[RMDB]
RNA sequence: GGGAACGACUCGAGUAGAGUCGAAAAGAUAUGGAACCAGAACUACUAAAUAUUCUUUCAUCGAUCCUGCGCAAAUCGGAAACGAUUUGCGCAGGGGAGAAAUUAGAUUUAGCUGGUUCCUAAGUCACUAUAGCUAGAUGUUCGCAUCUAGCUAUAGAAAAGAAACAACAACAACAAC
Reactivity to 2A3 in 0.01 (KOAc 150mM, MgCl2 10mM, bicine 150mM(pH8.5), 24C), signal-to-noise 1, nucleotides 027 to 126: g010a010u030a030u190g000g020a000a000c010c010a000g020a110a060c300u300a000c020u030a300a070a030u100a080u070u030c040u110u130u130c170a300u300c160g090a120u090c000c010u000g110c000g000c060a010a000a040u000c020g000g000a080a070a020c020g080a000u030u070u010g090c010g030c030a000g030g010g000g000a010g010a010a000a000u070u020a020g000a060u000u000u040a020g000c000u000g010g010u000u000c000c000u000a010a000g010u050c000a000
Reactivity to DMS in 0.01 (KOAc 150mM, MgCl2 10mM, bicine 150mM(pH8.5), 24C), signal-to-noise 1, nucleotides 027 to 126: g000a040u000a300u000g000g010a010a000c000c000a020g000a090a050c060u010a300c020u000a020a010a010u000a080u010u010c040u000u000u000c010a300u000c190g000a190u010c000c000u010g040c060g000c000a000a010a010u000c000g000g000a070a090a290c000g000a010u000u010u030g020c000g030c000a000g000g000g010g000a070g000a000a030a020u000u000a010g000a100u000u000u000a000g010c020u000g010g000u010u010c000c010u010a030a030g020u000c020a300